RNA sequence: GGGAACGACUCGAGUAGAGUCGAAAAUUGGGAGUCAUGGUGCAGGCCGAUAGUGGUUGCGUUGUGAGCUGGAAAAACAAAGAACUGAAAUGUGGCAGUGGGAUUUUCAUCACAGACAACGUGCACAGCUAUAUAUUUCGUUCGCGAAAUAUAUAGCAAAAGAAACAACAACAACAAC
Reactivity to DMS in 0.01 (KOAc 150mM, MgCl2 10mM, bicine 150mM(pH8.5), 24C), signal-to-noise 7, nucleotides 027 to 126: u010u030g000g000g020a070g010u010c050a090u020g020g020u020g010c050a110g010g000c030c030g010a130u040a110g020u030g000g020u010u000g010c060g000u010u000g010u010g000a110g020c050u000g010g010a030a030a050a070a070c130a090a090a100g010a110a050c080u010g010a050a050a100u020g010u010g010g000c060a040g020u010g010g010g020a120u000u000u000u000c040a090u010c040a070c070a090g000a070c110a040a060c060g000u010g010c120a060c160a120
Reactivity to 2A3 in 0.01 (KOAc 150mM, MgCl2 10mM, bicine 150mM(pH8.5), 24C), signal-to-noise 9, nucleotides 027 to 126: u100u070g010g000g020a020g030u060c040a040u080g040g000u030g020c030a020g030g040c010c010g080a080u090a070g110u110g080g030u050u080g010c020g020u020u030g020u020g030a050g010c040u020g010g050a050a050a010a000a010c110a030a150a040g060a060a020c030u070g020a050a050a170u140g020u050g070g000c020a010g020u060g020g050g020a020u040u020u040u050c070a080u050c010a020c030a040g090a030c020a080a020c060g040u070g030c040a030c010a070
Structure probing data (DMS and 2A3) for a 177-nucleotide construct. The reactions ran in a buffer of 150 mM KOAc, 10 mM MgCl2 and 150 mM bicine (pH 8.5), at 24 C. The 2A3 profile rests on 10,159 reads. It was measured as part of the RMDB library OK1LIB.